[RMDB]
RNA sequence: GGGAACGACUCGAGUAGAGUCGAAAACUUGGGAAAAAAGGACGUCCAUUGGAAACGCCGGACUUGGGAGAGAGGAUCAGGCUACCAGUUGGAUGUUUACGGCUGACUGAGACAUUGCCCAGGUCUGCAUCAUAUCGAUGUUCGCAUCGAUAUGAUGAAAAGAAACAACAACAACAAC
Reactivity to 2A3 in 0.01 (KOAc 150mM, MgCl2 10mM, bicine 150mM(pH8.5), 24C), signal-to-noise 5, nucleotides 027 to 126: c010u040u040g030g030g060a060a060a020a040a070a050g060g010a010c020g020u000c000c030a090u040u140g050g020a140a070a040c070g020c040c020g000g020a010c000u010u020g020g060g000a130g010a020g010a030g060g030a070u020c020a020g030g000c050u070a070c050c010a030g020u040u050g070g030a110u090g110u110u070u080a030c020g010g000c010u010g020a060c010u010g020a000g000a040c030a090u060u180g040c000c000c000a000g040g010u000c010u040g010
Reactivity to DMS in 0.01 (KOAc 150mM, MgCl2 10mM, bicine 150mM(pH8.5), 24C), signal-to-noise 6, nucleotides 027 to 126: c030u000u020g000g000g010a000a030a070a080a090a110g010g010a070c050g010u000c030c020a160u000u010g020g010a090a100a090c160g010c090c020g000g000a010c020u000u010g000g000g010a070g000a110g000a090g010g010a140u010c000a030g010g010c070u010a150c090c010a050g030u000u010g010g010a100u010g010u010u010u000a080c070g010g000c050u000g000a100c020u000g000a030g010a150c060a110u000u000g010c000c000c000a060g000g010u000c020u000g010

Structure probing data (2A3 and DMS) for a 177-nucleotide construct. Values cover nucleotides 27 to 126. The RNA was probed in 150 mM KOAc, 10 mM MgCl2 and 150 mM bicine (pH 8.5) at 24 C. For 2A3 the reverse transcriptase was SuperScript II with manganese.